[RMDB]
RNA sequence: GGGAACGACUCGAGUAGAGUCGAAAAUGUGUGUCUGUGUAUGUGUGUAUGUUUGUGCAUGUGAGCAUGUGUGUGUGGACUGUGUGUAUGUGUAUGUAUAUGUGUGGACUGUAUGUGUGCACACAUACACCUGGCUGACGUUCGCGUCAGCCAGGUGAAAAGAAACAACAACAACAAC
Reactivity to 2A3 in 0.01 (KOAc 150mM, MgCl2 10mM, bicine 150mM(pH8.5), 24C), signal-to-noise 1, nucleotides 027 to 126: u090g060u030g000u000g040u020c040u010g030u010g010u070a080u060g050u010g090u000g060u000a040u060g140u120u080u030g090u030g000c040a030u030g050u020g110a060g000c050a070u020g000u030g010u000g000u000g010u000g010g040a080c000u010g000u060g000u000g010u100a060u020g070u040g030u030a070u070g100u050a010u000a010u090g020u000g020u010g000g000a010c060u060g080u300a160u120g250u100g000u080g000c010a000c000a000c000a050u020a040
Reactivity to DMS in 0.01 (KOAc 150mM, MgCl2 10mM, bicine 150mM(pH8.5), 24C), signal-to-noise 1, nucleotides 027 to 126: u000g020u030g000u000g000u010c060u000g020u000g000u010a050u000g010u000g020u010g020u000a050u020g020u000u000u010g000u010g020c020a040u000g000u010g000a150g030c080a050u000g000u000g030u000g020u000g020u010g000g020a120c100u000g000u000g030u000g000u000a030u000g010u010g020u000a040u010g030u010a120u000a010u010g010u000g030u010g000g010a060c030u000g020u040a060u000g010u000g020u000g030c020a000c020a020c000a010u000a010